[RMDB]
RNA sequence: GGGAACGACUCGAGUAGAGUCGAAAAGUUUAAUAACCUGCGCUGAGCCCUUCUCCCCCAGCUUGCCUGUGUCCUAGGGAAUUGGAAGGUCAUCCUUCACAGGAUCGUGUGGAAGUCCUGCUCGGGGUCCAAACAUGGUAAUUCGUUACCAUGUUAACGUGAAGAGGAAAUUCGUUUCCUCUUCACGAAAAGAAACAACAACAACAAC
Reactivity to 2A3 in 0.01 (KOAc 150mM, MgCl2 10mM, bicine 150mM(pH8.5), 24C), signal-to-noise 3, nucleotides 027 to 156: g020u000u140u140a170a110u110a080a050c000c010u050g000c020g000c070u050g050a040g020c000c030c030u080u070c100u130c040c010c000c010c010a000g020c020u040u080g040c010c000u050g000u000g010u030c010c030u030a020g010g020g030a030a080u100u040g060g040a030a000g050g000u070c020a060u110c000c000u040u080c010a040c010a070g040g020a050u060c040g040u080g000u040g130g030a050a040g020u020c000c010u000g000c000u000c000g060g000g020g000u000c010c010a030a010a070c010a010u000g000g000u000a040a020u070u050c120g010u030u000a000c000c010a000u010g000u010u020a040a010
Reactivity to DMS in 0.01 (KOAc 150mM, MgCl2 10mM, bicine 150mM(pH8.5), 24C), signal-to-noise 2, nucleotides 027 to 156: g000u000u000u010a080a100u010a090a120c000c010u000g040c060g020c070u000g010a120g000c040c010c030u000u010c030u010c020c000c010c020c030a090g030c050u000u010g000c040c010u000g010u000g020u000c030c040u000a140g010g010g020a050a120u000u010g030g010a090a080g010g020u010c070a090u010c010c020u010u000c040a100c070a050g020g000a060u000c060g020u000g040u000g000g000a110a110g010u000c020c020u000g010c030u000c050g000g000g020g000u000c030c040a120a040a010c000a000u000g020g020u000a000a100u000u000c290g040u000u010a000c010c000a000u000g010u000u010a020a090
This 207-nucleotide RNA was probed chemically with 2A3 and DMS.
The RNA was probed in 150 mM KOAc, 10 mM MgCl2 and 150 mM bicine (pH 8.5) at 24 C.
Values cover nucleotides 27 to 156.
Source: RMDB library M2RFPK, as collected in RNAgym.